[RMDB]
RNA sequence: GGGAACGACUCGAGUAGAGUCGAAAAUCGAGAUUCAAGAGGUGAGGAGGGAUCCCCGAGACGCUGGAGGAGCACCGGGAAAAAGAAAAGAAGGCAAGGAAUUGGUAGAAAAGAGCGAGCCUCCCGAUGAGGACAGGGUUCGCCCUGUCCAAAAGAAACAACAACAACAAC
Reactivity to 2A3 in 0.01 (KOAc 150mM, MgCl2 10mM, bicine 150mM(pH8.5), 24C), signal-to-noise 4, nucleotides 027 to 129: u080c020g010a010g050a050u160u020c040a110a020g030a000g060g030u070g030a020g020g020a030g000g020g000a010u060c010c000c000c000g040a040g000a040c060g000c100u050g020g010a040g000g020a030g010c030a020c010c000g000g000g000a040a040a000a010a000g060a020a020a020a000g050a010a000g020g000c020a010a010g020g000a020a090u140u080g060g000u090a050g090a020a060a030a010g080a000g040c060g010a010g000c000c000u030c020c010c010g050a070u120g040a030
Reactivity to DMS in 0.01 (KOAc 150mM, MgCl2 10mM, bicine 150mM(pH8.5), 24C), signal-to-noise 3, nucleotides 027 to 129: u080c100g020a080g010a120u020u050c020a070a130g040a130g030g020u060g000a000g030g000a050g000g000g000a000u020c000c000c000c000g020a090g010a060c160g030c080u060g070g030a060g040g030a090g000c050a040c000c000g020g000g050a020a070a070a030a020g010a060a080a060a040g000a070a050g010g010c000a060a030g030g030a050a020u020u040g020g030u010a000g010a060a060a090a060g000a050g030c070g000a000g050c040c000u050c020c020c020g020a090u000g020a200